An RNA of 207 nucleotides, treated with DMS and 2A3 and read out base by base.
Values are in units of 0.01, from 0 to 300, in steps of 10.
DMS adducts were read by reverse transcription with MarathonRT.
The data come from the RNA Mapping Database (RMDB), library ARCHII.
For 2A3 the reverse transcriptase was SuperScript II with manganese.
In probing experiments dimethyl sulfate is read out at A N1 and C N3, which are open when not base-paired.

[RMDB]
RNA sequence: GGGAACGACUCGAGUAGAGUCGAAAAUCUUAUCCAAGACUUGUAUCAUUUGAUGAUGCCAUGUGAAUCGCUAGAAACAUGUGAAGUGUAUGGCUAACCCAAUAACGAAAGUUUCGUAAGGGGACUGGAGCAGGCUACCAUGAGACAAAAGAUCUUCACUAGGAAUAGUGUUCGCACUAUUCCUAGUAAAAGAAACAACAACAACAAC
Reactivity to DMS in 0.01 (KOAc 150mM, MgCl2 10mM, bicine 150mM(pH8.5), 24C), signal-to-noise 2, nucleotides 027 to 156: u020c030u020u000a090u000c070c060a090a140g040a090c040u000u000g000u000a080u000c020a090u010u010u010g040a080u010g000a090u010g000c010c030a010u020g030u000g010a130a170u010c020g030c070u000a080g010a170a080a110c030a070u020g010u000g000a080a110g060u010g030u000a060u000g000g000c040u020a080a200c020c050c010a030a150u020a060a070c080g000a130a080a160g000u000u010u000c050g000u000a080a150g060g000g000g040a070c070u020g000g040a190g040c010a080g020g050c030u000a060c010c050a040u000g010a120g000a100c040a030a060a060a080g000a210u000c010u000u000c070
Reactivity to 2A3 in 0.01 (KOAc 150mM, MgCl2 10mM, bicine 150mM(pH8.5), 24C), signal-to-noise 4, nucleotides 027 to 156: u010c010u040u080a050u040c030c020a030a030g070a040c030u070u080g020u090a060u060c030a080u070u070u190g060a080u040g010a010u050g000c000c020a030u030g030u030g070a070a040u050c020g010c050u030a040g080a120a170a030c070a050u120g060u050g050a070a050g040u030g010u060a050u050g010g000c030u020a080a070c020c010c000a040a100u100a050a010c020g060a110a080a110g070u050u110u090c030g010u050a080a070g000g020g000g000a020c070u060g040g010a050g030c030a020g040g070c010u020a050c000c010a040u080g010a000g020a060c030a010a090a030a040g050a040u040c030u040u070c040